[RMDB]
RNA sequence: GGGAACGACUCGAGUAGAGUCGAAAACGCUCGAAUUCGUUCGAGCGAAGUCAUCCUAAGUCCGAGGAUCACCACCGGAAGCGACGAUCUAUCGGAAACGAUAGGGAGCUUCGUGGUGGGAGGAUAUGGAACAAUUAUGCGUUUUCGAACGCAUAAAUCUAUUAACAAUCUUCGGAUUGUUAAUAGAAAAAGAAACAACAACAACAAC
Reactivity to DMS in 0.01 (KOAc 150mM, MgCl2 10mM, bicine 150mM(pH8.5), 24C), signal-to-noise 3, nucleotides 027 to 156: c040g020c000u010c000g020a050a060u000u010c270g020u000u000c000g040a030g000c010g010a020a050g020u020c100a180u000c000c010u000a090a180g020u000c030c010g010a140g010g020a140u010c040a060c010c010a030c020c030g020g010a030a020g030c000g010a110c160g010a030u000c010u010a000u010c000g020g010a220a120a230c000g030a040u000a030g020g010g010a100g000c010u000u000c010g020u000g030g030u000g000g000g000a070g020g030a140u010a130u020g000g000a080a110c080a130a210u000u000a010u000g010c000g050u000u010u000u020c290g010a020a020c000g020c000a010u000a000a030a200
Reactivity to 2A3 in 0.01 (KOAc 150mM, MgCl2 10mM, bicine 150mM(pH8.5), 24C), signal-to-noise 5, nucleotides 027 to 156: c010g000c010u000c000g020a020a030u120u080c190g060u100u000c000g040a000g010c000g000a020a000g040u050c060a090u060c010c000u040a130a030g050u000c000c010g050a170g070g040a040u020c020a020c010c000a030c050c110g160g030a010a000g010c010g300a300c010g000a040u000c000u000a010u000c000g110g000a150a030a020c000g000a000u000a000g010g000g000a010g000c000u010u010c010g070u040g000g000u000g000g000g000a020g000g010a020u040a060u160g030g020a060a050c010a040a020u080u020a000u020g000c010g000u010u000u020u080c180g090a010a000c000g000c000a000u000a000a020a000